Annotation:
This 177-nucleotide RNA was probed chemically with DMS and 2A3.

RNA sequence: GGGAACGACUCGAGUAGAGUCGAAAAUUAGAGGUCUCGAUCACUGCGAGACCGGGAGAGACGCUCCCGGGCCGGGUUAGGAACCGGUGCGGCGGGUGGUAUAGGAGCCGGCCGGACCCGGGGAUAAGUUAGGUUAAUACUUCGGUAUUAACCUAACAAAAGAAACAACAACAACAAC
Reactivity to DMS in 0.01 (KOAc 150mM, MgCl2 10mM, bicine 150mM(pH8.5), 24C), signal-to-noise 3, nucleotides 027 to 126: u010u020a110g000a180g030g000u000c000u000c010g010a080u020c150a120c220u000g010c010g000a030g000a020c010c010g000g000g000a100g000a140g010a090c090g000c080u000c010c000c000g000g010g040c030c010g000g000g000u010u010a110g010g000a100a150c040c010g020g020u000g020c030g000g000c050g010g010g030u000g000g010u000a070u000a140g010g000a190g020c000c020g000g020c000c010g000g000a070c030c010c000g010g000g000g000a070u010a020a160
Reactivity to 2A3 in 0.01 (KOAc 150mM, MgCl2 10mM, bicine 150mM(pH8.5), 24C), signal-to-noise 2, nucleotides 027 to 126: u100u070a090g000a030g110g000u000c010u000c020g030a100u150c050a050c300u180g000c010g000a010g010a020c000c030g000g000g000a110g000a020g010a010c020g020c090u040c000c010c030g000g040g010c010c010g030g000g020u080u100a090g140g000a120a060c020c030g020g030u090g140c010g010g020c080g000g040g050u170g000g060u090a140u080a220g050g030a030g010c020c060g050g030c000c000g080g020a090c000c020c020g000g000g030g010a040u040a110a050
The data come from the RNA Mapping Database (RMDB), library M2PK90.